[RMDB]
RNA sequence: GGGAACGACUCGAGUAGAGUCGAAAAAUAGGCUUAUCAAGAGAGGUGGAGGGACUGGCCCGAUGCAACCCGGCAGCCAGAAAUGGUGCCAAUUCCUGCAGCGGAAACGUUGAAAGAUGAGCCGAUGAGCGUAUACUCUUCGGAGUAUACAAAAGAAACAACAACAACAAC
Reactivity to 2A3 in 0.01 (KOAc 150mM, MgCl2 10mM, bicine 150mM(pH8.5), 24C), signal-to-noise 9, nucleotides 027 to 129: a000u140a030g010g000c000u020u020a020u040c070a130a020g110a000g010a050g150g050u100g040g060a080g020g010g010a020c030u040g050g000c010c000c010g020a030u090g020c010a040a050c010c020c000g000g010c020a050g160c010c010a000g020a020a060a030u080g020g000u040g020c010c010a010a020u070u040c010c020u030g010c010a000g010c010g020g000a060a050a040c050g030u030u050g050a100a050a010g010a010u020g000a000g010c000c010g010a060u110g040a020g030c070
Reactivity to DMS in 0.01 (KOAc 150mM, MgCl2 10mM, bicine 150mM(pH8.5), 24C), signal-to-noise 9, nucleotides 027 to 129: a050u020a050g010g040c020u010u000a000u000c050a120a080g000a050g050a110g000g050u040g020g020a080g010g000g010a100c030u000g000g030c080c040c040g010a060u030g030c050a050a070c100c060c040g000g030c000a060g060c010c030a060g030a060a080a080u040g010g030u030g020c040c020a050a090u000u000c080c010u020g000c020a000g000c010g000g010a040a050a050c050g040u010u000g000a080a060a060g010a000u020g000a020g020c000c000g020a060u000g020a070g010c130